[RMDB]
Structure probing data (2A3 and DMS) for a 177-nucleotide construct.
Conditions: 150 mM KOAc, 10 mM MgCl2 and 150 mM bicine (pH 8.5), 24 C.
For 2A3 the reverse transcriptase was SuperScript II with manganese.
It was measured as part of the RMDB library OK2TRN.

RNA sequence: GGGAACGACUCGAGUAGAGUCGAAAAUUCAUGGAAGCUCUGUUUCCUUAGGGCUAAAGGAAUGUCCUUAUGUGUACAAUGAAGAUGCUAGAAUAUAUUAUCACCAAGAUCACUUUCAACUCAAGUACGCAGCAUGAAAGUUCGCUUUCAUGCUGCGAAAAGAAACAACAACAACAAC
Reactivity to 2A3 in 0.01 (KOAc 150mM, MgCl2 10mM, bicine 150mM(pH8.5), 24C), signal-to-noise 1, nucleotides 027 to 126: u000u010c010a030u030g030g080a000a050g000c000u000c010u000g130u090u240u160c040c000u070u120a080g000g000g000c010u000a070a060a000g100g050a080a020u000g040u020c000c000u190u080a140u100g060u020g040u070a020c070a160a100u090g040a040a140g010a070u120g070c040u070a070g100a260a000u210a010u030a030u230u070a050u080c030a020c100c000a040a060g050a050u000c000a000c000u070u250u100c070a080a050c090u000c020a090a000g000u020a020
Reactivity to DMS in 0.01 (KOAc 150mM, MgCl2 10mM, bicine 150mM(pH8.5), 24C), signal-to-noise 1, nucleotides 027 to 126: u000u000c060a100u010g000g000a300a100g030c010u000c080u000g000u000u010u010c060c040u000u000a060g020g000g020c000u000a060a130a120g010g000a020a020u000g000u020c020c000u000u040a020u010g010u010g040u000a050c060a060a070u000g000a070a080g000a050u010g000c040u000a090g000a050a090u010a090u020a080u010u010a070u000c060a070c060c080a010a140g020a120u000c020a140c040u030u040u000c060a070a060c090u010c090a030a070g000u000a090